[RMDB]
RNA sequence: GGGAACGACUCGAGUAGAGUCGAAAAGAUAUGGACGAAAUUGAACAACAGCUCCACCCGUCGGAAACGACGGUUGGAGACAUGUUCUGUUUCGUCCUAAGUCAAAAGCAGAAGUUCGCUUCUGCAAGAUUGUUCCUUACUUCGGUAAGGAACAAUCAAAAGAAACAACAACAACAAC
Reactivity to DMS in 0.01 (KOAc 150mM, MgCl2 10mM, bicine 150mM(pH8.5), 24C), signal-to-noise 3, nucleotides 027 to 126: g010a050u010a300u000g000g000a010c000g020a000a020a010u010u000g000a010a020c020a100a100c260a250g010c000u010c010c000a010c130c010c000g040u000c000g000g000a080a140a190c010g010a000c010g000g010u010u000g000g000a000g010a010c090a100u000g000u000u000c000u000g000u000u000u000c000g010u010c000c000u010a010a070g010u020c050a080a080a160a170g000c000a020g000a010a000g020u010u000c290g010c010u000u000c000u000g010c020a080a060
Reactivity to 2A3 in 0.01 (KOAc 150mM, MgCl2 10mM, bicine 150mM(pH8.5), 24C), signal-to-noise 2, nucleotides 027 to 126: g030a010u060a040u120g000g010a000c000g000a000a000a000u030u030g000a020a010c050a030a030c060a240g100c000u010c010c000a030c000c020c000g010u000c000g020g020a080a020a040c010g020a000c020g020g000u000u010g010g010a000g030a000c000a030u070g000u020u000c010u000g020u000u000u010c000g000u000c000c000u010a020a000g030u010c030a000a020a010a100g000c000a010g010a000a010g020u120u280c300g040c240u030u000c000u000g030c000a010a030
The record gives the reactivity of an RNA of 177 nucleotides to DMS and 2A3. For DMS the reverse transcriptase was MarathonRT. For DMS, 2,848 sequencing reads were counted. For 2A3, 7,126 sequencing reads were counted. The data come from the RNA Mapping Database (RMDB), library TTRDES.